[RMDB]
RNA sequence: GGGAACGACUCGAGUAGAGUCGAAAAGAUUAAGUGGGAGCGUCGCCCUAUCGGUGCAUCGGAUAUUAAUUAGCCAGUGCGUGGCAUUACGCAUAUUGAUGUCUACUUUGGCGUAGACUAUGCCAAUUUAAGGAUUGGUGGGCAAUCCAGCCCUAGACGGAUUAAUUAGUUUCGACUAAUUAAUCCGAAAAGAAACAACAACAACAAC
Reactivity to DMS in 0.01 (KOAc 150mM, MgCl2 10mM, bicine 150mM(pH8.5), 24C), signal-to-noise 2, nucleotides 027 to 156: g010a120u000u000a040a090g020u000g010g000g000a080g060c030g040u000c030g000c040c000c050u010a070u000c040g040g020u000g000c040a060u000c040g010g000a060u010a050u020u000a050a110u010u000a140g010c010c020a090g000u000g010c010g010u010g000g020c050a090u000u000a030c040g030c040a080u000a110u000u010g000a140u030g020u000c000u000a040c030u000u000u020g030g030c080g050u000a040g010a090c070u010a030u010g000c010c000a020a070u010u010u000a080a130g040g020a080u000u000g010g030u000g000g020g030c020a030a130u000c080c060a180g000c010c000c000u010a090g010a270
Reactivity to 2A3 in 0.01 (KOAc 150mM, MgCl2 10mM, bicine 150mM(pH8.5), 24C), signal-to-noise 3, nucleotides 027 to 156: g050a030u170u170a100a080g050u190g030g010g000a030g000c000g010u040c030g030c000c030c010u090a160u120c040g020g010u030g010c040a050u050c030g040g000a010u000a060u150u180a190a080u150u100a030g020c010c020a050g000u000g040c010g050u010g050g050c140a040u050u160a010c010g000c040a010u020a080u090u170g080a060u090g000u000c000u000a010c040u110u090u190g060g000c050g000u010a010g010a010c000u010a060u080g000c000c000a000a000u010u060u110a120a080g070g010a030u000u040g000g020u050g000g020g000c000a030a020u030c070c020a020g050c000c000c000u030a040g010a050